This 177-nucleotide RNA was probed chemically with DMS and 2A3. Source: RMDB libraries RFM100 and RFMREP, as collected in RNAgym.
RNA sequence: GGGAACGACUCGAGUAGAGUCGAAAACAGCCUGGUACCAGACAGCCCCACCCUGACCUAGAGCAAAUGCUCGGGGCGCUCCCCUGGGCUUGAAACUUGCAGUAACAGGUGUGAACAUUCUAGUAGUAUAGAUAUAAGGGUUCGCCCUUAUAUCUAUAAAAGAAACAACAACAACAAC
Reactivity to DMS in 0.01 (KOAc 150mM, MgCl2 10mM, bicine 150mM(pH8.5), 24C), signal-to-noise 5, nucleotides 027 to 126: c060a110g000c040c010u000g000g010u000a060c050c030a060g010a090c100a110g010c040c020c020c060a110c040c030c020u000g010a110c060c040u010a120g010a070g010c030a100a110a090u010g020c000u000c010g000g000g000g000c140g000c130u020c030c010c000c030u000g000g010g000c020u020u020g000a080a080a080c040u010u010g010c070a100g010u010a040a070c050a020g000g010u000g000u000g000a090a100c140a070u010u000c030u000a090g000u010a100g020u010
Reactivity to 2A3 in 0.01 (KOAc 150mM, MgCl2 10mM, bicine 150mM(pH8.5), 24C), signal-to-noise 8, nucleotides 027 to 126: c010a000g030c010c010u030g020g010u050a060c010c030a010g050a090c020a030g050c010c010c000c010a030c020c010c000u030g040a060c010c030u060a060g000a000g060c030a070a100a110u230g000c010u010c000g000g000g000g000c050g000c010u070c000c000c000c010u010g000g000g000c000u010u080g040a060a030a020c020u030u080g010c060a030g010u050a090a030c010a030g010g030u050g050u030g090a050a020c020a060u070u070c030u030a060g040u020a010g030u010